[RMDB]
RNA sequence: GGGAACGACUCGAGUAGAGUCGAAAAGGGGAGACAACUCAGUCGACACAGCCCCCAGGGCCCGCUUCUGUGAAGCUCUCACGAUGAUGAUGGUACGUGUCUUCACUCCCGAGAAGACUGUCCGCCCCCCAAAGUAAGUUUUCGAACUUACUUUGGGAAAAGAAACAACAACAACAAC
Reactivity to 2A3 in 0.01 (KOAc 150mM, MgCl2 10mM, bicine 150mM(pH8.5), 24C), signal-to-noise 2, nucleotides 027 to 126: g000g010g040g010a050g030a040c020a060a050c080u040c070a010g040u020c030g140a060c040a000c000a100g040c020c000c000c060c060a100g050g030g020c010c010c070g020c030u070u040c030u040g100u010g050a070a040g030c000u000c000u000c050a080c060g080a050u130g020a050u060g030a050u120g080g000u160a060c100g140u060g010u020c000u000u020c040a060c070u010c000c020c000g010a020g000a030a010g010a000c010u010g010u000c010c010g000c020c000c010
Reactivity to DMS in 0.01 (KOAc 150mM, MgCl2 10mM, bicine 150mM(pH8.5), 24C), signal-to-noise 4, nucleotides 027 to 126: g010g010g010g000a140g000a070c050a070a170c110u010c060a080g010u010c040g000a160c090a070c160a120g000c040c010c010c050c090a110g000g000g000c010c060c070g020c050u000u000c040u010g020u010g010a110a140g010c120u000c050u010c030a050c070g010a090u000g010a070u010g010a100u000g010g000u000a030c020g000u000g010u000c000u000u000c010a050c120u000c010c040c000g020a120g010a030a020g010a020c020u000g010u000c020c010g000c030c020c040
An RNA of 177 nucleotides, treated with 2A3 and DMS and read out base by base. For DMS the reverse transcriptase was MarathonRT. Values cover nucleotides 27 to 126. It was measured as part of the RMDB library OK2TST. Conditions: 150 mM KOAc, 10 mM MgCl2 and 150 mM bicine (pH 8.5), 24 C.